[RMDB]
The record gives the reactivity of an RNA of 177 nucleotides to DMS and 2A3. The 2A3 profile rests on 6,557 reads. For DMS, 4,232 sequencing reads were counted. The reactions ran in a buffer of 150 mM KOAc, 10 mM MgCl2 and 150 mM bicine (pH 8.5), at 24 C.
RNA sequence: GGGAACGACUCGAGUAGAGUCGAAAAGAUAUGGAGUUUGUACGACUUGGAUUUAUGUAGCACUUCGGAAACGAAGCUACAUUGUCAGUCGUCAAACUCCUAAGUCAAAGGGGUCUUCGGACCCCAAGUAUUAUUUAAUCUUCGGAUUAAAUAAUACAAAAGAAACAACAACAACAAC
Reactivity to DMS in 0.01 (KOAc 150mM, MgCl2 10mM, bicine 150mM(pH8.5), 24C), signal-to-noise 4, nucleotides 027 to 126: g000a040u010a300u010g000g000a020g020u000u010u000g000u010a020c010g020a010c000u000u020g030g010a030u000u010u000a000u000g010u000a010g010c100a110c150u000u000c000g010g010a130a080a170c010g010a010a010g000c000u000a000c010a010u000u000g000u000c000a020g010u000c000g000u000c000a000a010a000c000u000c000c000u010a010a080g020u010c040a080a130a150g010g010g000g010u000c000u000u020c190g030g010a030c000c000c000c010a000a020
Reactivity to 2A3 in 0.01 (KOAc 150mM, MgCl2 10mM, bicine 150mM(pH8.5), 24C), signal-to-noise 4, nucleotides 027 to 126: g000a010u050a060u180g030g000a030g010u000u020u020g060u280a020c010g010a010c060u130u220g190g020a040u300u300u020a020u090g010u000a000g010c110a070c290u020u010c000g000g010a050a070a040c010g000a030a000g010c000u010a000c000a000u000u010g000u010c010a000g010u000c000g020u000c000a000a000a000c000u000c000c000u000a020a010g000u000c010a030a040a080g020g000g000g010u000c010u050u110c300g140g020a000c030c000c000c000a000a000